[RMDB]
Chemical mapping of a 177-nucleotide RNA with DMS and 2A3. For 2A3 the reverse transcriptase was SuperScript II with manganese. The RNA was probed in 150 mM KOAc, 10 mM MgCl2 and 150 mM bicine (pH 8.5) at 24 C.
RNA sequence: GGGAACGACUCGAGUAGAGUCGAAAAUCCUUCACCUGACUAACUCCUGCCUCCCCGAUCUGUUCCUUUCAGCAGAAACUAACGGCUUGUGGAUUUCUUUCUGACUAACAACAGGUCUAACACUCCUCCAUUAGUGGUUAUUCGUAACCACUAAUGGAAAAGAAACAACAACAACAAC
Reactivity to DMS in 0.01 (KOAc 150mM, MgCl2 10mM, bicine 150mM(pH8.5), 24C), signal-to-noise 4, nucleotides 027 to 126: u040c010c000u010u020c080a090c020c020u010g000a090c100u010a100a100c070u000c010c010u010g000c050c040u000c020c010c010c020g000a050u000c040u020g020u010u010c060c070u000u030u000c040a040g030c300a040g010a040a040a060c060u000a070a070c100g000g000c070u010u000g000u020g020g000a230u000u000u000c020u010u010u000c010u010g020a060c100u010a090a040c170a060a070c100a030g000g000u000c020u010a090a070c100a050c080u000c040c020u010
Reactivity to 2A3 in 0.01 (KOAc 150mM, MgCl2 10mM, bicine 150mM(pH8.5), 24C), signal-to-noise 9, nucleotides 027 to 126: u020c000c000u030u060c040a050c010c010u060g080a080c020u050a110a020c020u030c010c000u020g030c010c010u020c010c010c000c010g010a020u010c010u020g040u050u050c030c000u030u070u050c020a030g010c010a010g040a060a060a020c030u080a080a020c050g120g010c040u070u110g040u070g040g070a140u050u040u030c020u020u090u030c030u030g090a090c030u050a100a020c040a040a010c010a060g000g020u000c020u040a060a020c050a030c060u040c010c010u010